This 170-nucleotide RNA was probed chemically with DMS and 2A3. Conditions: 150 mM KOAc, 10 mM MgCl2 and 150 mM bicine (pH 8.5), 24 C. High DMS reactivity at an A or C suggests that its Watson-Crick edge is free. DMS adducts were read by reverse transcription with MarathonRT. For 2A3 the reverse transcriptase was SuperScript II with manganese. Source: RMDB library 15KLIB, as collected in RNAgym.
RNA sequence: GGGAACGACUCGAGUAGAGUCGAAAACACCCAGAGGGAGGAAGCCACACAGGGGUUUGCAGAGAAAUCACCUCCAGAGGACCCCUUCAGCGAACAGAACGAUCGCUUCACGCGGUGGGAGCAAGACAAACGAGUCUCUUCGGAGACUCGAAAAGAAACAACAACAACAAC
Reactivity to DMS in 0.01 (KOAc 150mM, MgCl2 10mM, bicine 150mM(pH8.5), 24C), signal-to-noise 6, nucleotides 027 to 129: c110a150c060c010c000a120g010a000g030g000g050a030g040g010a050a090g040c060c030a100c150a080c160a050g010g020g010g040u020u020u040g010c300a100g120a120g000a010a020a030u050c080a170c130c000u000c050c070a080g020a110g030g010a050c200c050c010c020u030u000c100a100g000c050g040a040a000c060a070g030a060a140c120g000a080u010c150g040c030u030u100c100a000c130g050c050g030g000u050g050g070g010a040g030c000a090a030g010a000c110a040a040a170
Reactivity to 2A3 in 0.01 (KOAc 150mM, MgCl2 10mM, bicine 150mM(pH8.5), 24C), signal-to-noise 4, nucleotides 027 to 129: c070a030c000c000c000a020g040a030g030g000g000a020g000g010a020a010g030c010c010a050c000a030c030a040g040g010g000g000u020u050u090g040c080a030g030a000g040a120a140a030u080c020a040c020c010u020c010c020a000g030a050g050g030a060c010c000c000c000u060u090c080a020g000c000g000a010a010c000a020g060a060a030c070g030a010u070c040g000c020u110u110c060a070c100g060c040g050g040u050g020g000g000a010g010c020a040a000g060a090c020a020a040a000